[RMDB]
RNA sequence: GGGAACGACUCGAGUAGAGUCGAAAAGAUAUGGAGGAAGAAGAGCGAUAAGCUGCGCUCGGAAACGAGCGGCAGCUUUUGACGCUUGUAAACUCCUAAGUCAAACACGCGUCUUCGGACGCGUGAACAAGAGGUGCUAGUUCGCUAGCACCUCUUGAAAAGAAACAACAACAACAAC
Reactivity to DMS in 0.01 (KOAc 150mM, MgCl2 10mM, bicine 150mM(pH8.5), 24C), signal-to-noise 2, nucleotides 027 to 126: g000a040u000a300u000g010g020a000g020g000a040a090g040a280a300g010a030g020c010g010a120u000a040a010g020c000u000g020c000g000c000u000c000g000g000a090a110a080c000g000a030g050c000g000g020c000a000g010c040u000u000u000u000g020a110c010g010c000u010u000g000u000a010a090a300c000u000c000c000u000a030a110g000u000c040a090a100a060c000a000c000g000c000g000u000c000u000u000c200g070g020a040c000g000c000g000u000g000a100a180